[RMDB]
RNA sequence: GGGAACGACUCGAGUAGAGUCGAAAAGGGUUUUGCUUGGAUCUCUUGGCUGACCACGUGGCCAUACGUUCAACACUCCAGGAUGCCUGUUCCUGGAGCCAGACAGAAAAUGAGUUAGGGCUGCAAAAGCAACCGUGAAUUUCGAUUCACGGUUGCUAAAAGAAACAACAACAACAAC
Reactivity to DMS in 0.01 (KOAc 150mM, MgCl2 10mM, bicine 150mM(pH8.5), 24C), signal-to-noise 1, nucleotides 027 to 126: g000g010g000u000u060u040u000g000c040u000u000g000g000a110u020c020u080c080u000u000g000g010c010u010g000a190c070c050a060c120g000u060g000g000c010c000a050u000a070c290g000u020u000c020a020a110c260a290c070u000c000c000a070g000g000a110u050g010c120c000u020g000u000u000c000c000u040g060g000a000g000c090c130a240g020a000c300a180g050a160a030a030a050u000g000a230g000u000u050a110g000g000g100c050u000g000c050a120a010a070
Reactivity to 2A3 in 0.01 (KOAc 150mM, MgCl2 10mM, bicine 150mM(pH8.5), 24C), signal-to-noise 1, nucleotides 027 to 126: g000g010g000u050u090u080u010g070c100u070u020g050g040a120u050c080u040c000u070u050g000g030c060u040g010a040c030c020a060c020g020u060g020g000c070c000a020u050a070c050g100u070u050c040a040a010c070a000c030u000c000c000a000g000g000a040u160g130c030c110u160g160u060u000c050c030u010g000g000a000g000c000c000a100g000a030c000a010g080a060a110a050a120u210g010a040g080u070u010a050g040g000g000c070u020g020c030a110a110a000